This 207-nucleotide RNA was probed chemically with 2A3. The RNA was probed in 150 mM KOAc, 10 mM MgCl2 and 150 mM bicine (pH 8.5) at 24 C. It was measured as part of the RMDB library RNAMAK. The 2A3 profile rests on 1,225 reads.
RNA sequence: GGGAACGACUCGAGUAGAGUCGAAAAUCCAAGAUUCGUCUUGGAAAAAAACCGUAGGUUCCAGUGUAACGAGGACACGAGGUUCGAAAGAGCUACCCACCGUGUCUACCCACCGUUAUUGGAACCUAAACGGAAAAAAUCUUAGUUCGCUAAGAAACGUGAGUAAGUGUUUCGACACUUACUCACGAAAAGAAACAACAACAACAAC
Reactivity to 2A3 in 0.01 (KOAc 150mM, MgCl2 10mM, bicine 150mM(pH8.5), 24C), signal-to-noise 2, nucleotides 027 to 156: u020c010c000a060a000g000a010u100u190c240g040u000c120u020u030g020g000a060a000a000a000a020a080a050c010c000g000u010a030g000g000u010u000c000c000a050g040u070g080u190a020a000c000g010a000g000g010a000c010a000c010g000a010g000g000u010u040c050g040a110a070a050g050a030g030c050u100a180c040c030c010a040c030c000g010u000g030u000c030u060a120c070c060c070a060c030c000g000u000u010a050u090u010g010g000a000a000c000c000u000a010a010a010c020g010g000a050a000a000a000a150a050u060c000u010u010a000g030u040u060c240g020c150u020a000a000g000a070a090a040